This 177-nucleotide RNA was probed chemically with 2A3 and DMS.
The reactions ran in a buffer of 150 mM KOAc, 10 mM MgCl2 and 150 mM bicine (pH 8.5), at 24 C.
2A3 adducts were read by reverse transcription with SuperScript II with manganese.
It was measured as part of the RMDB library TTRDES.
The DMS profile rests on 2,740 reads.
[RMDB]
RNA sequence: GGGAACGACUCGAGUAGAGUCGAAAAGAUAUGGAUCCACCCAUGACAUGCGUGACAUCGGAAACGAUGUACACGCAACAGCAUGGUGGAUCCUAAGUCAAAAGCCCUAUUCUUCGGAAUAGGGCAACAUUGACGAGCAGUUCGCUGCUCGUCAAUGAAAAGAAACAACAACAACAAC
Reactivity to 2A3 in 0.01 (KOAc 150mM, MgCl2 10mM, bicine 150mM(pH8.5), 24C), signal-to-noise 1, nucleotides 027 to 126: g000a000u030a010u060g010g020a010u000c000c020a080c130c210c020a000u010g050a090c120a290u210g030c030g000u020g010a010c000a010u010c010g020g000a010a010a030c030g000a000u000g020u140a110c000a000c000g010c010a010a010c020a000g040c000a000u000g000g000u000g000g020a010u010c000c000u000a000a000g000u000c010a050a020a080a120g010c020c010c020u010a000u000u010c020u010u150c300g140g000a000a010u000a010g000g000g000c000a000a000
Reactivity to DMS in 0.01 (KOAc 150mM, MgCl2 10mM, bicine 150mM(pH8.5), 24C), signal-to-noise 2, nucleotides 027 to 126: g000a040u000a130u010g000g000a000u010c000c010a000c180c090c090a000u000g010a040c100a130u010g010c000g020u000g010a040c000a000u000c000g020g010a030a040a080c000g010a000u000g010u000a130c010a010c000g030c010a000a010c180a160g020c000a010u000g010g010u000g000g000a000u000c000c000u000a000a050g000u010c010a100a110a160a150g010c000c000c000u000a000u010u000c000u000u000c200g010g000a020a010u010a020g010g010g020c010a010a000